[RMDB]
RNA sequence: GGGAACGACUCGAGUAGAGUCGAAAAGAUCUGCGCCGAUCCGAAACGCUAACAAACAGCCCGCAUCAUGUCGUCUCCUAACUUCGACGUGGUGAAAUACUGAGCUUAUGCGAGUAAGCCUGUUAGCAAUAGAUCAGAACGUUCGCGUUCUGAUCAAACGCUAUAUUUCGUUCGCGAAAUAUAGCGUAAAAGAAACAACAACAACAAC
Reactivity to 2A3 in 0.01 (KOAc 150mM, MgCl2 10mM, bicine 150mM(pH8.5), 24C), signal-to-noise 5, nucleotides 027 to 156: g020a030u020c020u090g040c060g020c080c030g030a030u030c030c040g060a080a030a040c070g000c020u020a030a000c010a040a100a020c020a030g050c000c000c010g050c000a000u000c000a000u010g000u000c000g050u000c040u080c070c100u130a180a180c090u070u020c010g000a000c000g010u000g000g000u020g020a020a020a020u180a040c050u020g020a030g010c000u040u010a010u070g120c040g010a050g060u010a000a000g010c010c040u030g010u030u000a000g000c010a030a100u090a130g010a000u000c000a000g000a000a000c010g010u060u060c190g000c010g120u000u000c020u000g000a000u000c000a000a010
Reactivity to DMS in 0.01 (KOAc 150mM, MgCl2 10mM, bicine 150mM(pH8.5), 24C), signal-to-noise 2, nucleotides 027 to 156: g010a070u000c030u020g000c070g030c050c020g010a080u000c040c040g020a070a090a110c070g020c010u000a020a050c030a080a080a190c040a140g000c010c040c080g060c020a050u000c010a030u000g000u000c000g000u000c090u000c090c110u000a120a080c060u000u010c030g020a040c020g020u020g010g000u000g010a030a050a060u000a110c060u000g020a170g000c030u000u000a040u000g010c250g000a230g010u000a020a050g010c000c040u010g000u000u020a040g050c040a120a080u010a110g000a020u000c000a030g000a030a010c000g040u010u000c300g020c010g040u010u000c000u010g000a000u000c030a020a030
The record gives the reactivity of an RNA of 207 nucleotides to 2A3 and DMS. It was measured as part of the RMDB library M2RFPK. For 2A3 the reverse transcriptase was SuperScript II with manganese.